[RMDB]
RNA sequence: GGGAACGACUCGAGUAGAGUCGAAAAGGGGUCACUUCGAUAAGACGUCCGACAGCUAUGAAGUACACUGAAGCCUCCACGGUGUAUGGAGCUGGGGACGUCUUUUGACGAAGUGACGGAGGCACCCAAGCCCGUCGAGCGUUCGCGCUCGACGGAAAGAAACAGUAUUAUUCGUAAUACUGUUUCUAAAAGAAACAACAACAACAAC
Reactivity to 2A3 in 0.01 (KOAc 150mM, MgCl2 10mM, bicine 150mM(pH8.5), 24C), signal-to-noise 3, nucleotides 027 to 156: g040g050g110g020u010c010a020c020u010u010c030g100a160u090a300a030g000a010c000g000u000c010c010g300a300c020a010g000c020u090a290u300g000a000a000g000u010a000c000a000c000u050g030a060a010g010c000c000u010c000c000a000c010g010g000u000g010u010a010u010g010g010a000g010c000u000g000g000g020g100a000c000g000u000c010u010u020u050u100g090a020c000g000a010a000g010u000g000a000c010g000g000a000g000g000c000a010c000c000c000a020a020g050c000c010c010g000u020c010g000a000g000c010g020u110u120c270g020c030g000c080u000c000g000a000c000g000g000a040a070
Background:
This 207-nucleotide RNA was probed chemically with 2A3. 2A3 adducts were read by reverse transcription with SuperScript II with manganese. The 2A3 profile rests on 2,682 reads.